[RMDB]
The record gives the reactivity of an RNA of 177 nucleotides to DMS and 2A3. The DMS profile rests on 1,306 reads. Conditions: 150 mM KOAc, 10 mM MgCl2 and 150 mM bicine (pH 8.5), 24 C. Source: RMDB library RFMREP, as collected in RNAgym. 2A3 adducts were read by reverse transcription with SuperScript II with manganese.
RNA sequence: GGGAACGACUCGAGUAGAGUCGAAAAGACCCGGGGGCGGUACCCGGCGCCUCCACCACAGCACAGCUUGCCGAUCAGGCUGUGUUGUGGCGGGGGCGAAACAGGAUCGACAAGGGUGUAAAGAUCGCCACCUAAUAAGGUUCGCCUUAUUAGGUGGAAAAGAAACAACAACAACAAC
Reactivity to DMS in 0.01 (KOAc 150mM, MgCl2 10mM, bicine 150mM(pH8.5), 24C), signal-to-noise 2, nucleotides 027 to 126: g000a200c070c000c000g030g020g040g020g040c090g000g000u010a020c050c000c020g020g020c030g000c000c000u000c010c000a060c000c000a010c000a010g000c010a000c000a000g000c000u000u010g020c300c240g000a150u010c010a050g010g010c000u000g030u000g000u000u000g010u000g000g020c030g020g010g000g000g020c020g010a000a040a020c100a070g000g000a000u000c000g000a120c090a120a140g040g030g020u000g000u000a090a100a110g030a050u000c070g000
Reactivity to 2A3 in 0.01 (KOAc 150mM, MgCl2 10mM, bicine 150mM(pH8.5), 24C), signal-to-noise 2, nucleotides 027 to 126: g040a030c030c010c060g000g000g010g030g030c040g040g010u050a080c010c000c000g010g020c000g000c010c000u000c000c000a010c000c000a000c000a000g000c010a000c000a010g020c020u010u010g080c090c070g200a300u300c010a000g000g050c000u010g000u000g000u010u000g000u010g010g020c010g010g000g000g040g020c000g020a010a000a000c010a010g060g020a060u040c020g000a020c090a070a110g160g100g000u090g100u110a110a110a020g060a050u100c020g000